An RNA of 177 nucleotides, treated with DMS and 2A3 and read out base by base.
[RMDB]
RNA sequence: GGGAACGACUCGAGUAGAGUCGAAAAUUAAUAGAUUUCGAUCUAUUAAACAGGCGGAGGCACGCUCCUAGCGACCGGCGCAAGCGCGCACGGUACAGCGAAUACUGAAUCCCUUCGGGGAUUCAAACAUGAUACAAGGCUUCGGCCUUGUAUCAUGAAAAGAAACAACAACAACAAC
Reactivity to DMS in 0.01 (KOAc 150mM, MgCl2 10mM, bicine 150mM(pH8.5), 24C), signal-to-noise 1, nucleotides 027 to 126: u000u000a010a010u000a020g020a020u000u000u030c160g020a030u000c010u000a000u010u000a000a020a100c080a070g020g000c000g020g000a120g000g010c110a110c050g010c010u000c010c020u010a070g000c030g000a050c020c010g000g000c000g010c010a130a090g020c290g030c010g000c020a060c000g000g000u000a050c060a150g020c030g000a100a070u000a160c180u010g000a020a000u000c000c000c000u000u000c270g030g010g000g000a010u000u000c000a010a040a240
Reactivity to 2A3 in 0.01 (KOAc 150mM, MgCl2 10mM, bicine 150mM(pH8.5), 24C), signal-to-noise 1, nucleotides 027 to 126: u030u030a010a000u010a000g000a000u040u090u040c130g010a020u020c020u000a010u070u010a070a070a060c040a010g030g000c020g040g010a030g070g130c060a000c080g020c000u020c000c000u010a020g000c020g030a010c020c000g010g000c020g050c030a190a240g250c070g000c000g020c190a140c090g070g000u100a200c040a010g020c000g040a020a000u100a190c040u050g010a010a000u000c000c020c000u010u010c140g050g000g000g000a000u000u010c010a010a000a000
Conditions: 150 mM KOAc, 10 mM MgCl2 and 150 mM bicine (pH 8.5), 24 C.
The data come from the RNA Mapping Database (RMDB), library M2PK50.
As a SHAPE reagent, 2A3 marks flexible, mostly unpaired nucleotides at the ribose 2'-OH.
The 2A3 profile rests on 1,139 reads.